[RMDB]
Structure probing data (2A3 and DMS) for a 177-nucleotide construct. The DMS profile rests on 905 reads. Conditions: 150 mM KOAc, 10 mM MgCl2 and 150 mM bicine (pH 8.5), 24 C.
RNA sequence: GGGAACGACUCGAGUAGAGUCGAAAAUGUCACGUAUUGACCUGAAAUUUGAGCAACGAGACGGGAAAUAUCACCUGAUAGAGAAAGACAGCUACACCUACCCCAUCAAGGGCAUUGAGUCCGAUAACAGCCCAGAUACAUUCGUGUAUCUGGGCUGAAAAGAAACAACAACAACAAC
Reactivity to 2A3 in 0.01 (KOAc 150mM, MgCl2 10mM, bicine 150mM(pH8.5), 24C), signal-to-noise 1, nucleotides 027 to 126: u010g020u050c000a010c040g120u080a060u010u160g070a110c000c000u010g050a070a090a120u080u070u110g100a100g030c030a000a040c000g000a030g020a050c040g010g000g090a000a010a110u110a040u040c050a030c010c000u040g020a100u140a110g170a010g060a040a040a000g050a060c040a040g000c040u050a020c010a040c080c000u110a060c020c000c000c000a020u050c000a000a170g080g000g010c020a000u020u120g070a050g010u000c040c040g000a000u040a060a000
Reactivity to DMS in 0.01 (KOAc 150mM, MgCl2 10mM, bicine 150mM(pH8.5), 24C), signal-to-noise 2, nucleotides 027 to 126: u010g000u010c020a100c110g000u000a080u020u010g030a150c030c030u000g010a030a070a180u000u020u000g020a100g060c040a010a080c070g010a080g020a100c120g010g020g020a070a070a100u000a040u010c030a080c110c040u010g000a090u010a060g010a140g000a050a040a110g000a100c030a010g040c040u010a090c050a090c010c040u000a200c040c000c030c040a020u000c190a050a050g000g000g020c030a130u010u010g010a160g010u000c020c000g020a040u010a070a190